This 177-nucleotide RNA was probed chemically with DMS and 2A3. It was measured as part of the RMDB library M2PK50. For DMS, 9,068 sequencing reads were counted. 2A3 adducts were read by reverse transcription with SuperScript II with manganese. The reactions ran in a buffer of 150 mM KOAc, 10 mM MgCl2 and 150 mM bicine (pH 8.5), at 24 C.
RNA sequence: GGGAACGACUCGAGUAGAGUCGAAAAGUGGAUAGUUUCGACUAUCCACACAACUGAUGAUCUUACAGUGGAGGAUGAAGAACAUGGCCAUCGGAUCCUCAAAUAGCACAGAGUUCGCUCUGUGCAACACAAUAAGGUGGUUCGCCACCUUAUUGUGAAAAGAAACAACAACAACAAC
Reactivity to DMS in 0.01 (KOAc 150mM, MgCl2 10mM, bicine 150mM(pH8.5), 24C), signal-to-noise 6, nucleotides 027 to 126: g020u000g010g010a010u000a010g000u000u000u020c190g020a030c000u000a000u000c000c000a010c000a040c170a080a070c040u010g000a080u010g010a090u010c040u010u000a130c090a070g010u010g020g010a060g010g010a060u010g010a160a100g010a050a100c130a060u000g000g000c050c030a050u000c030g000g000a070u000c010c010u010c100a060a050a090u000a140g010c000a000c000a000g000a020g020u000u010c230g000c010u000c000u000g000u000g010c010a040a080
Reactivity to 2A3 in 0.01 (KOAc 150mM, MgCl2 10mM, bicine 150mM(pH8.5), 24C), signal-to-noise 9, nucleotides 027 to 126: g000u000g000g000a000u000a010g000u010u050u110c180g030a010c010u000a000u010c000c000a000c000a000c000a000a010c020u070g020a060u040g010a040u070c030u060u170a070c040a090g040u090g110g050a030g060g020a060u090g080a070a110g030a090a020c040a120u130g100g000c040c020a020u020c020g030g030a020u010c010c000u030c010a040a080a080u160a020g000c000a000c000a010g000a000g020u060u060c160g050c060u000c000u010g000u000g000c000a010a010